[RMDB]
RNA sequence: GGGAACGACUCGAGUAGAGUCGAAAAUUAAGGCCAGGAGUUUUAGACCAGCCUCACCAACAUUUGCGAAACCCCGUCUCUACUAAAAGUAUAAAAAUUAGCCGGGUGUGGUCUACUCAGGGGCUGAGGCACGAGAAUCACUUGCACCAGGUGGCGAGUAUUUAUAUACGUUCGCGUAUAUAAAUACAAAAGAAACAACAACAACAAC
Reactivity to 2A3 in 0.01 (KOAc 150mM, MgCl2 10mM, bicine 150mM(pH8.5), 24C), signal-to-noise 1, nucleotides 027 to 156: u030u050a000a020g030g000c040c040a070g120g000a050g010u190u190u150u200a060g000a050c000c000a020g020c000c000u030c010a050c050c030a090a200c030a150u150u140u240g020c080g050a030a080a090c000c000c050c000g000u020c050u000c020u070a050c020u040a020a030a120a090g050u020a070u140a120a130a120a300a200u130u030a000g080c080c010g110g010g000u050g000u000g040g000u000c000u050a100c020u040c040a060g080g000g050g000c030u060g020a050g000g030c040a060c100g060a050g020a060a010u040c040a000c050u070u050g000c000a040c020c010a010g010g010u000g010g020c000g030a000